Source information: This 177-nucleotide RNA was probed chemically with 2A3 and DMS. For DMS, 511 sequencing reads were counted. 2A3 adducts were read by reverse transcription with SuperScript II with manganese. DMS adducts were read by reverse transcription with MarathonRT. The reactions ran in a buffer of 150 mM KOAc, 10 mM MgCl2 and 150 mM bicine (pH 8.5), at 24 C.
RNA sequence: GGGAACGACUCGAGUAGAGUCGAAAACAGUUAUGUGCGUCGCUCCCGAAGCUGCGCGCUCGGUCGAAGAGGACGACCAUCGCCGAUAGAGGACGACCGGUCUUCGGUCAAGGGAAUAAGAGUAAAAGGUACAGUCACCGUUCGCGGUGACUGUACCAAAAGAAACAACAACAACAAC
Reactivity to 2A3 in 0.01 (KOAc 150mM, MgCl2 10mM, bicine 150mM(pH8.5), 24C), signal-to-noise 1, nucleotides 027 to 126: c050a030g050u140u100a140u200g060u060g010c030g000u000c020g000c000u000c000c020c000g010a030a010g000c040u050g010c050g000c000g010c040u040c030g000g020u010c010g010a040a030g010a130g080g030a030c030g000a010c000c030a070u090c020g010c040c020g010a020u100a130g080a060g000g070a070c070g010a000c010c020g000g070u010c050u080u110c040g000g000u000c010a010a030g020g000g040a100a040u160a130a050g060a010g070u060a000a050a030a030
Reactivity to DMS in 0.01 (KOAc 150mM, MgCl2 10mM, bicine 150mM(pH8.5), 24C), signal-to-noise 1, nucleotides 027 to 126: c100a140g030u020u070a040u000g020u000g010c050g080u000c240g000c020u010c010c040c020g000a180a030g000c060u030g070c070g010c060g000c000u000c060g000g000u000c090g010a090a190g020a160g000g020a090c110g020a080c050c100a090u000c020g010c030c060g000a060u000a140g030a090g020g000a020c100g000a060c020c070g050g000u010c030u000u000c000g010g010u000c000a050a030g000g050g000a020a090u030a040a120g040a030g020u040a020a140a050a080